[RMDB]
RNA sequence: GGGAACGACUCGAGUAGAGUCGAAAAGGAAGGAAAUUAAGGAAAGGAGGGCCAACCCACACCCGAGCCAAGGAAUAUGGAUUUCCACCUACAUGGAUUGGGCAUACCUGGUACCAAAAGGCAUUAGCAAAGGAAUUAAUCGGUGCCUAGCCGUAAAUAAUAGUGCGUGAUUCGUCACGCACUAUUAAAAAGAAACAACAACAACAAC
Reactivity to DMS in 0.01 (KOAc 150mM, MgCl2 10mM, bicine 150mM(pH8.5), 24C), signal-to-noise 1, nucleotides 027 to 156: g010g040a050a050g030g040a140a120a280u010u010a080a080g000g000a100a120a090g000g020a140g030g010g010c060c060a060a110c030c000c060a130c060a110c030c010c000g000a030g000c020c050a090a160g000g020a030a070u000a100u000g000g040a160u010u000u000c010c010a070c050c010u010a020c070a120u000g000g010a080u020u010g000g000g020c020a060u000a060c080c020u000g000g010u010a120c030c020a020a050a040a080g040g020c020a050u000u000a080g040c010a000a020a110g020g030a000a080u000u010a090a080u000c060g020g020u000g020c050c010u000a050g070c020c020g020u000a020a090a220
Reactivity to 2A3 in 0.01 (KOAc 150mM, MgCl2 10mM, bicine 150mM(pH8.5), 24C), signal-to-noise 2, nucleotides 027 to 156: g030g000a050a000g010g010a020a020a080u100u060a030a090g010g010a060a010a020g030g010a030g000g000g000c020c020a030a050c030c000c010a030c000a010c010c030c000g020a010g020c020c010a050a060g070g030a070a090u070a070u260g070g000a120u060u050u060c010c000a020c010c010u100a080c020a090u260g080g000a090u070u080g050g010g000c000a020u070a040c010c000u000g030g020u070a050c010c050a000a030a040a070g040g000c020a020u080u160a060g030c060a060a060a030g010g010a010a030u050u060a130a010u100c030g030g000u020g000c020c010u000a000g010c010c010g080u100a000a000a100

The record gives the reactivity of an RNA of 207 nucleotides to DMS and 2A3. For DMS, 1,692 sequencing reads were counted. For 2A3 the reverse transcriptase was SuperScript II with manganese. The reactions ran in a buffer of 150 mM KOAc, 10 mM MgCl2 and 150 mM bicine (pH 8.5), at 24 C. For DMS the reverse transcriptase was MarathonRT.